[RMDB]
RNA sequence: GGGAACGACUCGAGUAGAGUCGAAAAGUGGGAGGCUUUGAAACCAGGACGCCAGUUUUGGCGGAGCCAUCCUUGGGAUACCACCCUUGUAGUACUGGGACUCUAACCAUAGGCCAUGAAUCUGGUCAGCAUAUAGCCCAUUCGUGGGCUAUAUGCUAAAAGAAACAACAACAACAAC
Reactivity to 2A3 in 0.01 (KOAc 150mM, MgCl2 10mM, bicine 150mM(pH8.5), 24C), signal-to-noise 2, nucleotides 027 to 126: g150u140g000g010g000a060g020g010c020u130u130u060g140a130a050a030c010c000a000g020g010a000c000g030c010c050a100g030u060u110u100u100g000g020c000g000g010a000g000c010c000a140u020c030c000u040u030g000g000g040a070u050a120c030c000a030c010c010c000u000u070g140u000a080g010u000a070c080u030g020g000g060a040c010u010c050u110a120a150c050c000a150u080a110g020g000c000c040a090u040g070a130a060u090c000u020g020g000u000c030
Reactivity to DMS in 0.01 (KOAc 150mM, MgCl2 10mM, bicine 150mM(pH8.5), 24C), signal-to-noise 2, nucleotides 027 to 126: g030u030g000g020g050a090g000g000c000u000u000u000g000a040a130a080c020c000a020g000g010a030c000g000c090c240a140g010u000u000u020u000g000g000c000g000g000a030g020c000c010a110u000c020c000u000u000g010g000g020a140u080a100c070c050a080c010c030c000u000u020g000u000a080g020u040a060c070u010g010g000g000a120c050u000c100u000a070a160c120c080a040u040a110g010g000c020c020a060u000g000a070a150u000c020u050g000g010u010c150